[RMDB]
RNA sequence: GGGAACGACUCGAGUAGAGUCGAAAAAAAAAGAUAUGGAGCCAUGAAGGCUGAUGACCCAUAUCACAGCCAGUCGGAAACGACUGGUCACAGUAUGGCAAGGCCGGCAUGGCUCCUAAGUCAAAAACUCAAGUUAGAUGUUCGCAUCUAACUUGAGAAAAGAAACAACAACAACAAC
Reactivity to DMS in 0.01 (KOAc 150mM, MgCl2 10mM, bicine 150mM(pH8.5), 24C), signal-to-noise 1, nucleotides 027 to 126: a030a020a010a230a000g000a070u000a300u020g000g000a080g000c000c000a000u000g020a030a030g000g000c000u000g020a070u020g020a100c300c000c000a020u000a000u000c050a120c300a220g000c000c000a020g000u020c000g020g000a140a080a110c020g000a020c020u000g000g000u010c040a040c220a200g000u000a020u000g000g010c030a080a080g010g010c010c000g000g000c030a020u000g000g000c000u020c000c000u000a020a040g030u000c030a050a080a050a170a110
Chemical mapping of a 177-nucleotide RNA with DMS.
Reactivities are rounded to 0.1 and cut off at 0 and 3.
It was measured as part of the RMDB library TTRDES.
Conditions: 150 mM KOAc, 10 mM MgCl2 and 150 mM bicine (pH 8.5), 24 C.